[RMDB]
RNA sequence: GGGAACGACUCGAGUAGAGUCGAAAAGCGCAAGGCCAAAUCGUUGCCACCCAUCUGGCGGGUGCUGGCGAUAUGGUCACGAUGAUAAUCGCCUCUGAGCUGGAUCUCCAAGACCGUUAUUUGGCCGCAAAGGGCACAGGUUCGCCUGUGCCCUUUGAAAAGAAACAACAACAACAAC
Reactivity to DMS in 0.01 (KOAc 150mM, MgCl2 10mM, bicine 150mM(pH8.5), 24C), signal-to-noise 3, nucleotides 027 to 126: g030c090g000c150a120a140g000g010c010c010a010a090a050u000c030g020u000u000g020c300c010a020c010c010c010a180u010c180u020g030g020c150g010g000g010u000g030c040u020g010g000c000g010a010u000a060u010g010g020u000c020a130c160g010a040u000g010a090u000a070a120u010c070g020c040c020u010c090u010g000a190g000c000u010g000g010a090u000c020u010c010c060a080a110g000a020c020c020g030u010u010a120u000u010u000g010g040c020c020g000
Reactivity to 2A3 in 0.01 (KOAc 150mM, MgCl2 10mM, bicine 150mM(pH8.5), 24C), signal-to-noise 2, nucleotides 027 to 126: g150c100g030c120a090a150g000g010c000c010a030a050a010u020c020g020u010u030g030c040c010a020c000c000c000a050u190c170u270g270g010c140g020g030g000u030g010c050u020g030g000c000g010a050u010a050u050g000g000u010c010a000c030g050a060u170g020a010u100a150a090u090c070g000c000c050u050c150u190g040a080g030c000u020g060g020a060u020c010u000c020c010a060a020g020a050c000c000g020u000u080a150u090u080u100g020g000c010c020g000
An RNA of 177 nucleotides, treated with DMS and 2A3 and read out base by base. For 2A3, 1,562 sequencing reads were counted. The RNA was probed in 150 mM KOAc, 10 mM MgCl2 and 150 mM bicine (pH 8.5) at 24 C. Values are in units of 0.01, from 0 to 300, in steps of 10. Source: RMDB library OK2TST, as collected in RNAgym.